RNA sequence: GGGAACGACUCGAGUAGAGUCGAAAACGAGUAAUCUACGAUCGCUACAACGCGCUAAGCAAUGGAGAUGAUUCUUGAGGGAAGCAAUUCUGCAGAGACAUCUCCACCCUGGGGUGGCGUCGCCAGAAUACACCGACCCGUUACAGGGAAAUUGGCUCCCUAUAGACUUCUUCGGAAGUCUAUAGGGAAAAGAAACAACAACAACAAC
Reactivity to 2A3 in 0.01 (KOAc 150mM, MgCl2 10mM, bicine 150mM(pH8.5), 24C), signal-to-noise 2, nucleotides 027 to 156: c000g000a030g060u140a030a130u100c070u130a060c050g040a050u190c020g020c030u040a020c010a200a030c100g050c000g020c140u210a090a010g000c020a040a110u100g000g010a000g000a000u020g030a080u000u130c010u050u040g010a160g000g060g020a070a000g060c040a040a120u050u000c000u080g060c050a010g000a000g000a000c000a000u000c000u000c000c000a000c000c000c000u000g000g010g040g000u010g010g030c050g010u000c080g070c050c010a010g020a160a040u090a040c030a020c000c030g050a040c010c010c000g030u040u110a110c120a040g020g000g110a080a060a180u120u060g060g000c030u010
Record summary
An RNA of 207 nucleotides, treated with 2A3 and read out base by base. Reactivities are given for positions 27 through 156. The reactions ran in a buffer of 150 mM KOAc, 10 mM MgCl2 and 150 mM bicine (pH 8.5), at 24 C. For 2A3, 693 sequencing reads were counted. It was measured as part of the RMDB library ARCHII.